Notes
Source: RMDB library OK1LIB, as collected in RNAgym. An RNA of 177 nucleotides, treated with DMS and 2A3 and read out base by base. For 2A3 the reverse transcriptase was SuperScript II with manganese. The RNA was probed in 150 mM KOAc, 10 mM MgCl2 and 150 mM bicine (pH 8.5) at 24 C. For DMS the reverse transcriptase was MarathonRT. Reactivities are given for positions 27 through 126.
RNA sequence: GGGAACGACUCGAGUAGAGUCGAAAACAAUAUGCAUGGAUCCGAUGUACAAAAUUCAUGCGUAUUAGUAUGCUCGUACAUCGGAUUGCACUCAUGAAAAUGAGUGUAACAUAUUAUACGAGCAUAAGGUAGACGUUGAUUUCGAUCAGCGUCUACCAAAAGAAACAACAACAACAAC
Reactivity to DMS in 0.01 (KOAc 150mM, MgCl2 10mM, bicine 150mM(pH8.5), 24C), signal-to-noise 5, nucleotides 027 to 126: c070a050a010u010a000u000g000c000a000u000g010g000a030u010c030c060g000a050u000g020u010a160c280a040a040a020a020u000u010c000a010u000g000c000g020u000a010u000u020a100g000u020a000u000g010c000u000c010g000u010a030c040a010u000c020g020g000a300u000u000g000c010a000c000u000c000a010u000g000a100a050a130a010u000g000a010g000u000g000u010a000a040c120a080u030a090u010u020a120u010a020c010g000a000g000c010a000u010a030a100
Reactivity to 2A3 in 0.01 (KOAc 150mM, MgCl2 10mM, bicine 150mM(pH8.5), 24C), signal-to-noise 6, nucleotides 027 to 126: c010a000a010u000a000u000g000c000a000u010g000g000a000u010c000c010g010a010u030g040u070a120c060a030a130a020a050u010u010c000a000u010g000c000g000u000a010u000u010a010g040u010a000u010g000c000u000c000g000u000a010c000a010u000c000g000g000a000u000u000g000c000a000c000u000c000a000u010g070a030a030a010a020u000g000a000g000u000g000u000a010a000c000a000u130a050u110u150a040u020a000c000g000a000g000c000a010u010a040a020